Structure probing data (2A3 and DMS) for a 170-nucleotide construct. For DMS the reverse transcriptase was MarathonRT. 2A3 adducts were read by reverse transcription with SuperScript II with manganese. Values cover nucleotides 27 to 129. The 2A3 profile rests on 5,232 reads.
RNA sequence: GGGAACGACUCGAGUAGAGUCGAAAAGGAGCUUUUUCGGCGGAGGAGCUCCCUCCCCGUCCUUCCCUUUUCUUAUUAUUCCGAGGAUGUUUCCCAGCCAGGGAUUUUCGUCCUCGAGUUUCUUGAUGCAGGAUGGGGUUCGCCCCAUCCAAAAGAAACAACAACAACAAC
Reactivity to 2A3 in 0.01 (KOAc 150mM, MgCl2 10mM, bicine 150mM(pH8.5), 24C), signal-to-noise 3, nucleotides 027 to 129: g010g010a040g060c010u000u020u000u010u200c010g060g050c100g030g010a040g000g000a000g020c020u010c000c000c000u030c000c000c000c000g050u070c000c010u010u070c010c000c000u000u080u050u050c060u080u120a180u100u110a200u150u090c080c010g000a000g020g000a000u000g020u010u010u010c010c000c020a110g070c060c080a100g000g000g000a010u030u050u020u060c000g000u000c000c000u000c010g000a040g000u000u030u000c030u020u070g090a050u160g060c020a040
Reactivity to DMS in 0.01 (KOAc 150mM, MgCl2 10mM, bicine 150mM(pH8.5), 24C), signal-to-noise 2, nucleotides 027 to 129: g000g050a080g030c050u050u010u000u160u030c080g100g000c160g090g010a070g030g000a040g000c050u000c000c040c060u030c020c020c030c020g020u000c000c000u030u000c050c000c050u020u010u030u030c090u050u070a140u070u030a060u040u060c110c000g040a030g000g000a050u020g010u040u000u010c030c000c020a080g050c000c000a230g010g040g030a000u000u000u060u060c040g010u010c000c000u020c000g000a100g020u000u000u000c060u060u030g050a120u200g000c240a130